[RMDB]
RNA sequence: GGGAACGACUCGAGUAGAGUCGAAAAUUUUGGGCACUGAUCGCGACAUACAUCUGGGCUGGCGGACACCAUUUGCACUAUACUGCUCUUCCGGACUGGACUCAGUCGGUAGCUAUGGUUAUGUCUCCUCACUGACACCGUUCGCGGUGUCAGUGAGAAAAGAAACAACAACAACAAC
Reactivity to DMS in 0.01 (KOAc 150mM, MgCl2 10mM, bicine 150mM(pH8.5), 24C), signal-to-noise 2, nucleotides 027 to 126: u010u010u010u000g040g020g010c020a060c060u010g010a090u000c060g000c060g000a070c100a060u010a120c100a090u020c070u000g000g000g000c050u000g000g000c040g000g010a130c030a050c030c000a090u000u010u020g040c040a020c060u000a110u010a050c010u000g010c060u000c070u010u010c000c030g000g020a160c140u000g030g000a050c240u010c020a030g010u000c030g010g010u000a040g000c050u000a050u000g000g000u000u010a110u000g000u010c010u010c050
Reactivity to 2A3 in 0.01 (KOAc 150mM, MgCl2 10mM, bicine 150mM(pH8.5), 24C), signal-to-noise 2, nucleotides 027 to 126: u110u090u060u050g040g010g030c040a020c060u000g050a090u060c070g000c050g070a030c060a030u190a030c050a030u010c050u050g000g020g040c050u020g020g000c030g040g020a010c000a010c050c010a010u100u060u090g050c030a010c020u010a040u040a130c070u060g000c010u050c000u120u020c010c010g130g060a120c060u070g010g060a090c040u060c140a010g040u000c000g000g000u020a020g000c000u010a030u060g060g020u070u050a060u100g060u030c020u020c030
The record gives the reactivity of an RNA of 177 nucleotides to DMS and 2A3. The DMS profile rests on 1,421 reads. DMS adducts were read by reverse transcription with MarathonRT. The data come from the RNA Mapping Database (RMDB), library OK2TST. Conditions: 150 mM KOAc, 10 mM MgCl2 and 150 mM bicine (pH 8.5), 24 C.